The record gives the reactivity of an RNA of 170 nucleotides to DMS and 2A3. High DMS reactivity at an A or C suggests that its Watson-Crick edge is free. The DMS profile rests on 8,187 reads. The 2A3 profile rests on 7,074 reads. High 2A3 reactivity points to a flexible backbone, as in loops and unpaired stretches.

RNA sequence: GGGAACGACUCGAGUAGAGUCGAAAACUGAGUGCCCCUGACGUCCAGACCCUCCCCCGUCCGGGAGAAUGGAGAUUCGGGAACGUGAAGCAUGGUGGGGACGAAGCCCCCUCCGGGCGCUCCCCUCAAAGCGGCUAGUUCGCUAGCCGCAAAAGAAACAACAACAACAAC
Reactivity to DMS in 0.01 (KOAc 150mM, MgCl2 10mM, bicine 150mM(pH8.5), 24C), signal-to-noise 3, nucleotides 027 to 129: c010u020g090a090g000u030g030c000c000c020c050u120g030a010c270g040u040c020c030a050g000a110c180c080c010u020c030c000c040c060c140g050u110c170c180g030g030g010a000g020a080a050u040g000g020a060g030a100u060u000c070g040g020g010a140a040c040g000u080g020a100a070g000c050a150u050g000g070u030g010g010g030g010a070c120g000a110a090g060c000c000c000c000c000u040c060c000g060g000g030c050g010c040u020c010c030c020c010u030c060a080a060a080
Reactivity to 2A3 in 0.01 (KOAc 150mM, MgCl2 10mM, bicine 150mM(pH8.5), 24C), signal-to-noise 4, nucleotides 027 to 129: c030u040g010a000g010u000g020c010c000c010c010u030g010a020c000g080u000c020c010a000g000a040c010c010c010u010c020c010c020c030c020g230u150c040c060g010g010g020a020g020a070a040u170g000g020a060g010a040u050u070c040g000g000g010a070a080c020g100u090g110a060a000g070c060a050u150g000g000u060g000g000g000g000a010c140g080a070a010g020c000c030c000c000c020u040c020c000g000g010g000c000g000c000u000c000c000c000c000u020c030a100a110a000